[RMDB]
RNA sequence: GGGAACGACUCGAGUAGAGUCGAAAAGAGCCACCGCGCCUGGCCUCUUCCAGAAGGUUUUCGAUGGCAGCAGGUGGAGGGGAGCGAGAGGGCCAUCGCUCCUGCUGCAAGGGCAGCCCCUCCACGGCAUGUCAUUCCGAUUCGUCGGAAUGACAUGAAAAGAAACAACAACAACAAC
Reactivity to DMS in 0.01 (KOAc 150mM, MgCl2 10mM, bicine 150mM(pH8.5), 24C), signal-to-noise 5, nucleotides 027 to 126: g010a160g010c020c010a030c060c040g020c080g010c020c020u000g010g000c030c010u000c070u010u010c040c060a110g020a110a100g020g020u000u000u010u000c050g010a120u000g010g010c030a130g030c040a110g000g030u000g000g010a020g010g000g010g010a040g000c020g000a030g000a150g000g010g010c020c030a190u000c010g020c010u000c020c070u000g010c010u010g000c050a240a140g020g000g000c020a050g010c020c290c000c000u000c000c020a050c040g000g010
Reactivity to 2A3 in 0.01 (KOAc 150mM, MgCl2 10mM, bicine 150mM(pH8.5), 24C), signal-to-noise 1, nucleotides 027 to 126: g020a010g030c030c000a030c000c050g030c000g000c010c010u000g030g000c000c010u040c010u110u040c030c000a030g090a130a100g120g000u050u040u060u210c050g030a040u070g020g030c050a070g000c020a030g040g170u010g000g040a020g000g000g020g010a020g060c060g030a050g050a060g100g100g040c010c010a010u010c010g000c000u010c000c000u010g010c000u020g000c040a220a210g110g130g000c020a020g000c000c000c020c000u000c000c000a010c000g040g010
Structure probing data (DMS and 2A3) for a 177-nucleotide construct.
Reactivities are given for positions 27 through 126.
DMS adducts were read by reverse transcription with MarathonRT.
Source: RMDB library OK2TRN, as collected in RNAgym.